An RNA of 177 nucleotides, treated with 2A3 and DMS and read out base by base.
The RNA was probed in 150 mM KOAc, 10 mM MgCl2 and 150 mM bicine (pH 8.5) at 24 C.
RNA sequence: GGGAACGACUCGAGUAGAGUCGAAAACUGAGGCUGGGUGUGGCAGAGGAGAGCACAGCCAGUUGUGGGUUUUUCUUGGGGCCCAGAUAGAUGGGAACAGAGGUGGAGGCCCCUCUCUCCCAGCACCGAAAGCAACUGAUUUCGAUCAGUUGCUUUCAAAAGAAACAACAACAACAAC
Reactivity to 2A3 in 0.01 (KOAc 150mM, MgCl2 10mM, bicine 150mM(pH8.5), 24C), signal-to-noise 6, nucleotides 027 to 126: c050u090g070a040g110g000c020u020g000g040g110u030g010u030g060g030c080a060g050a090g130g050a050g010a010g040c010a000c010a030g120c000c000a010g000u030u070g080u170g020g020g030u020u040u010u030u040c060u050u090g000g000g030g000c010c020c030a010g030a040u170a020g120a060u060g010g010g020a060a040c040a050g040a040g020g050u110g030g070a090g020g050c010c000c000c000u000c000u000c000u000c010c000c000a020g010c040a030c030c080
Reactivity to DMS in 0.01 (KOAc 150mM, MgCl2 10mM, bicine 150mM(pH8.5), 24C), signal-to-noise 3, nucleotides 027 to 126: c000u000g000a110g000g000c010u020g020g000g020u010g000u000g010g010c070a120g010a100g000g000a090g000a170g000c030a010c030a040g000c000c000a040g010u000u010g010u010g000g000g000u000u000u010u010u020c020u020u010g010g010g000g000c000c020c030a120g020a140u030a080g000a100u000g020g000g010a070a090c140a060g000a090g000g010u000g020g020a110g020g010c030c030c010c010u000c030u020c080u000c010c010c000a110g030c160a090c160c120